[RMDB]
This 177-nucleotide RNA was probed chemically with 2A3 and DMS.
Reactivities are given for positions 27 through 126.
The 2A3 profile rests on 1,574 reads.
The reactions ran in a buffer of 150 mM KOAc, 10 mM MgCl2 and 150 mM bicine (pH 8.5), at 24 C.
It was measured as part of the RMDB library OK1LIB.
For DMS the reverse transcriptase was MarathonRT.
RNA sequence: GGGAACGACUCGAGUAGAGUCGAAAACGCCGCUUCUGCCAGGAUCUCUCGCCCCGACAAUCAGGCAUUGUUUGUCUUGGCGGCAUGCCUUUGUCUUGAGUCCUGCUCUGUUUGCUCGGCUAUUUGCCCGACGUACCCAUUUCGAUGGGUACGUCGGAAAAGAAACAACAACAACAAC
Reactivity to 2A3 in 0.01 (KOAc 150mM, MgCl2 10mM, bicine 150mM(pH8.5), 24C), signal-to-noise 3, nucleotides 027 to 126: c080g000c000c000g010c020u030u030c010u020g090c000c020a020g040g040a120u060c020u000c020u030c080g080c000c020c000c000g000a010c020a000a040u140c100a030g050g010c030a050u060u180g110u040u020u170g060u030c060u100u120g140g000c000g000g020c000a000u030g000c020c000u030u030u070g080u020c040u040u220g000a020g010u010c000c000u000g000c040u020c010u070g090u050u050u020g030c070u030c060g000g000c010u010a130u040u110u120g060c000
Reactivity to DMS in 0.01 (KOAc 150mM, MgCl2 10mM, bicine 150mM(pH8.5), 24C), signal-to-noise 1, nucleotides 027 to 126: c140g050c000c000g000c010u030u020c030u000g000c300c080a000g000g010a040u100c110u000c000u000c110g020c090c000c060c070g030a000c000a020a000u030c300a010g000g040c100a000u030u060g000u010u000u040g000u030c080u050u010g000g050c000g000g000c000a000u030g000c000c000u000u040u020g020u000c050u000u020g000a150g120u000c040c020u050g040c130u000c080u000g020u010u000u040g030c100u000c000g010g000c030u000a010u010u010u090g020c000